RNA sequence: GGGAACGACUCGAGUAGAGUCGAAAAAGCAUUUUCCGUGAAGUUUGAGGUCCAGGCUCCACGCUGGGGCAACCCCCGUGCGCUCAGCUUCGUACUGAGUUCGCUCCAGCUCGGGGAGGGGGUGGAAUAGUACUCAUGACUUCGGUCAUGAGUACUAAAAAGAAACAACAACAACAAC
Reactivity to DMS in 0.01 (KOAc 150mM, MgCl2 10mM, bicine 150mM(pH8.5), 24C), signal-to-noise 1, nucleotides 027 to 126: a060g020c090a100u010u000u010u000c010c010g010u040g010a090a060g000u000u000u000g020a130g000g000u020c020c050a070g010g010c010u000c010c010a030c120g020c020u000g000g030g000g060c070a120a100c060c020c020c000c030g020u000g020c150g000c010u000c020a040g010c030u010u010c180g000u020a100c000u000g010a010g010u000u000c070g000c010u000c020c000a050g000c040u010c080g010g000g010g020a060g000g010g010g000g020u010g000g000a090a130